[RMDB]
Overview: This 207-nucleotide RNA was probed chemically with 2A3 and DMS. High 2A3 reactivity points to a flexible backbone, as in loops and unpaired stretches. DMS adducts were read by reverse transcription with MarathonRT. For DMS, 2,314 sequencing reads were counted.

RNA sequence: GGGAACGACUCGAGUAGAGUCGAAAAAUCAUUUUGUAAUUGUGACAUCAUACUAAAUAAAUCGUUUGCGAGAUUGUUGUGGGAAGCGGGCAUGGAGGAUGCAUUAUCAUUAUUAUUUAACGCCUUCCAUUUGGAUUCACAAAUGUUACGCACAUUCCUAUUAAAAUUCGUUCGCGAAUUUUAAUAGAAAAGAAACAACAACAACAAC
Reactivity to 2A3 in 0.01 (KOAc 150mM, MgCl2 10mM, bicine 150mM(pH8.5), 24C), signal-to-noise 2, nucleotides 027 to 156: a000u080c060a070u070u030u040u110g060u090a180a170u050u190g060u030g000a020c020a030u170c010a020u080a110c080u190a140a090a090u220a020a120a070u130c130g020u030u080u120g070c070g000a040g010a200u080u040g060u060u030g000u050g000g030g010a060a010g010c020g000g020g040c020a010u030g030g000a000g010g020a060u050g000c000a010u000u110a000u020c060a010u020u130a040u040u110a110u040u300u130a040a010c040g030c000c000u010u020c010c010a020u020u010u150g060g040a020u100u130c080a080c000a040a070a030u050g020u040u110a050c030g010c030a040c010a040u050u000c000
Reactivity to DMS in 0.01 (KOAc 150mM, MgCl2 10mM, bicine 150mM(pH8.5), 24C), signal-to-noise 2, nucleotides 027 to 156: a130u020c050a100u010u000u000u000g010u000a080a140u000u000g030u000g010a120c030a110u000c100a130u000a230c040u000a070a100a140u010a030a070a100u000c050g040u000u000u000g020c000g030a080g010a180u010u000g020u000u020g050u000g000g040g010a080a060g020c090g050g000g050c070a060u020g010g000a080g040g010a050u000g020c010a080u000u000a030u000c040a070u000u020a170u000u000a140u010u020u000a060a090c040g010c040c000u010u010c020c000a140u000u000u000g000g000a110u000u000c070a070c020a030a070a020u000g020u000u000a080c070g060c050a130c040a210u010u000c010